[RMDB]
RNA sequence: GGGAACGACUCGAGUAGAGUCGAAAACGCUGGGUACCAGCGGAGCCUCAACAGCGUACUGAAGCGCGCACGGUACGACAUGAUGGCUCCGACUGGUACCUGUGCUGAAGCGCGCACGGCAACCGAAAGGUGCGGGAGACGUUUUUCGAAACGUCAAAUCAGAGUGUUUGUUCGCAAACACUCUGAUAAAAGAAACAACAACAACAAC
Reactivity to 2A3 in 0.01 (KOAc 150mM, MgCl2 10mM, bicine 150mM(pH8.5), 24C), signal-to-noise 2, nucleotides 027 to 156: c020g010c010u030g010g010g000u000a000c000c000a000g000c030g010g000a010g000c000c010u130c110a110a100c050a110g100c010g020u000a000c000u040g050a240a040g010c000g000c000g010c010a000c010g000g000u060a000c010g090a060c090a150u220g020a080u300g050g000c130u120c130c000g110a060c010u010g000g010u000a000c000c000u000g000u020g000c010u010g040a090a040g010c010g000c020g000c010a020c030g000g030c010a030a000c030c000g030a080a010a070g000g000u010g020c000g000g040g040a160g000a010c010g000u000u000u020u070u100c180g060a070a000a000c010g010u010c000a020a160
Reactivity to DMS in 0.01 (KOAc 150mM, MgCl2 10mM, bicine 150mM(pH8.5), 24C), signal-to-noise 1, nucleotides 027 to 156: c050g060c000u000g030g030g020u000a000c000c000a040g010c000g050g000a070g000c030c000u010c040a080a190c100a170g000c040g000u010a100c020u030g000a060a050g000c000g030c000g020c010a300c000g020g000u000a010c000g010a080c060a230u000g020a120u000g020g060c000u000c000c000g050a060c030u000g000g010u010a000c000c000u000g010u000g010c050u000g010a040a090g000c030g000c000g000c020a300c000g010g000c000a100a160c030c010g060a120a130a130g040g010u000g040c080g000g030g020a190g000a010c000g020u020u000u000u000u040c300g030a060a010a000c010g000u000c000a070a170